Overview: Structure probing data (DMS and 2A3) for a 177-nucleotide construct. The 2A3 profile rests on 2,192 reads. High DMS reactivity at an A or C suggests that its Watson-Crick edge is free. The reactions ran in a buffer of 150 mM KOAc, 10 mM MgCl2 and 150 mM bicine (pH 8.5), at 24 C. DMS adducts were read by reverse transcription with MarathonRT. It was measured as part of the RMDB library TTRDEL.
[RMDB]
RNA sequence: GGGAACGACUCGAGUAGAGUCGAAAAAAAAAAGAUAUGGAAUCGCAUGGACGCAUCGAUCUAUGGAGAUAGCUGUCGGAAACGACCGAAACCAUAGGGAGCGUUGAGCGAUUCCUAAGUCAAAAAAUCAAGAAGACAAGUUCGCUUGUCUUCUUGAAAAAGAAACAACAACAACAAC
Reactivity to DMS in 0.01 (KOAc 150mM, MgCl2 10mM, bicine 150mM(pH8.5), 24C), signal-to-noise 2, nucleotides 027 to 126: a000a000a070a060a090a090g000a000u000a080u010g000g000a030a000u000c000g010c000a010u000g000g000a010c000g030c010a300u000c150g000a020u020c000u010a000u000g010g000a240g010a140u020a070g000c230u030g010u000c000g000g000a000a000a060c000g030a000c000c060g000a080a100a050c000c000a000u000a010g040g000g000a010g020c010g020u000u000g000a030g000c000g000a020u000u000c000c000u000a010a040g000u020c020a010a030a060a040a070a100
Reactivity to 2A3 in 0.01 (KOAc 150mM, MgCl2 10mM, bicine 150mM(pH8.5), 24C), signal-to-noise 1, nucleotides 027 to 126: a020a020a020a010a000a100g020a000u040a000u040g000g010a000a000u020c010g000c080a060u300g100g000a000c000g060c010a100u300c030g000a000u030c000u010a000u010g030g020a070g050a060u210a060g170c300u120g050u010c020g000g010a000a000a010c000g010a000c020c000g060a150a050a040c000c000a020u000a010g040g010g010a010g020c010g000u020u010g020a010g020c000g010a010u000u000c000c000u000a000a000g000u020c040a000a000a000a000a100a200